[RMDB]
RNA sequence: GGGAACGACUCGAGUAGAGUCGAAAAGAUAUGGACUUCAUAGAAGGCAACAGCGUGUCUCGGAAACGAGACACGACAUGCCUCUUAUAAGUCCUAAGUCAAACUGGGUUCGUUCGCGAACCCAGAAGACUUAGUUAUCCUUCGGGAUAACUAAGUCAAAAGAAACAACAACAACAAC
Reactivity to DMS in 0.01 (KOAc 150mM, MgCl2 10mM, bicine 150mM(pH8.5), 24C), signal-to-noise 4, nucleotides 027 to 126: g000a070u000a300u020g000g000a020c000u000u020c250a070u000a020g020a040a040g020g010c020a020a080c300a180g000c020g020u000g000u010c000u000c000g000g000a090a100a220c010g020a000g020a020c010a010c010g000a010c060a180u000g010c000c000u000c020u000u000a080u010a020a000g000u000c000c000u010a030a170g010u000c040a100a120a280c000u000g000g000g020u000u000c000g010u000u010c270g020c020g030a000a020c000c010c000a010g000a050a100
Reactivity to 2A3 in 0.01 (KOAc 150mM, MgCl2 10mM, bicine 150mM(pH8.5), 24C), signal-to-noise 3, nucleotides 027 to 126: g010a000u070a050u180g000g010a000c000u000u010c090a020u070a130g060a150a110g230g000c050a200a080c070a300g070c000g000u010g000u000c000u020c010g020g010a090a040a030c000g000a000g000a010c000a000c000g000a000c000a010u110g010c020c000u010c000u020u100a070u020a140a010g000u000c000c000u020a140a000g050u040c050a060a070a160c010u000g000g030g000u000u010c010g010u080u080c260g020c000g180a000a000c000c010c010a000g000a010a000